[RMDB]
RNA sequence: GGGAACGACUCGAGUAGAGUCGAAAAGUCGUCGUGACGGGUUCGCCGCAUGACAUCGGCCGGCAGCUCGGCGAGCUCGCGCGGCCGGCGAUGGAUGCGUACAUCGCGCAGAGCGGCGCGUGGCGCAGCCAGUGAUGCGCUUCGGCGCAUCACUGGCAAAAGAAACAACAACAACAAC
Reactivity to 2A3 in 0.01 (KOAc 150mM, MgCl2 10mM, bicine 150mM(pH8.5), 24C), signal-to-noise 1, nucleotides 027 to 126: g040u060c020g010u000c010g030u070g030a130c030g040g000g000u170u270c060g000c050c040g000c050a080u050g020a070c010a090u070c050g090g030c030c000g030g000c010a020g000c030u000c050g110g160c110g070a010g000c060u060c140g000c030g000c000g000g000c020c020g000g000c010g020a020u100g090g040a030u060g010c010g000u030a100c040a140u170c080g000c000g000c050a080g030a030g300c060g060g000c000g000c000g010u010g050g040c010g000c030a010
Reactivity to DMS in 0.01 (KOAc 150mM, MgCl2 10mM, bicine 150mM(pH8.5), 24C), signal-to-noise 1, nucleotides 027 to 126: g010u000c040g010u000c050g020u000g020a150c030g020g000g000u010u000c080g020c050c000g100c100a090u010g000a120c050a080u020c040g020g010c000c010g010g000c050a040g020c060u000c010g010g040c120g000a010g010c040u000c090g030c030g010c010g000g010c020c000g010g020c060g020a090u000g010g000a100u000g000c020g030u010a140c070a050u000c040g020c000g010c040a130g010a210g050c200g000g010c030g000c040g020u000g000g000c000g030c050a100